[RMDB]
Chemical mapping of a 177-nucleotide RNA with 2A3 and DMS. High DMS reactivity at an A or C suggests that its Watson-Crick edge is free. It was measured as part of the RMDB library OK2TRN. Values cover nucleotides 27 to 126. The 2A3 profile rests on 3,247 reads. The reactions ran in a buffer of 150 mM KOAc, 10 mM MgCl2 and 150 mM bicine (pH 8.5), at 24 C.
RNA sequence: GGGAACGACUCGAGUAGAGUCGAAAACAUCAAGGUGGUCCGGGAGAUCGUUUCCGGCCUGGGCCUCAAGGAGGCCAAGGACCUGGUCGACGGCGCGCCCAAGCCGCUGCUGGAGAAGGUCGCCAAGCAUGCAAUCUGCAUUCGUGCAGAUUGCAUGAAAAGAAACAACAACAACAAC
Reactivity to 2A3 in 0.01 (KOAc 150mM, MgCl2 10mM, bicine 150mM(pH8.5), 24C), signal-to-noise 2, nucleotides 027 to 126: c020a060u140c120a120a070g110g010u040g030g020u070c030c000g010g060g000a050g030a180u140c070g040u020u040u030c010c000g010g020c000c000u000g010g000g010c020c000u030c000a030a110g250g020a010g000g000c000c010a000a010g060g010a100c010c030u050g000g090u050c010g010a110c020g000g000c020g000c020g000c000c020c020a020a040g030c010c020g000c050u110g000c010u040g020g000a120g010a110a030g040g020u050c000g020c040c020a020a000g080
Reactivity to DMS in 0.01 (KOAc 150mM, MgCl2 10mM, bicine 150mM(pH8.5), 24C), signal-to-noise 3, nucleotides 027 to 126: c090a080u010c120a070a100g010g000u010g010g000u010c040c030g000g000g000a040g000a090u000c090g010u000u000u000c000c000g040g010c010c010u010g010g020g000c000c010u000c040a160a150g020g010a010g010g010c010c000a050a010g020g010a080c020c050u010g000g020u000c020g010a090c030g010g020c040g000c080g020c020c050c040a110a170g000c040c020g020c040u000g010c030u010g000g000a090g000a140a090g010g020u010c030g020c020c050a080a150g000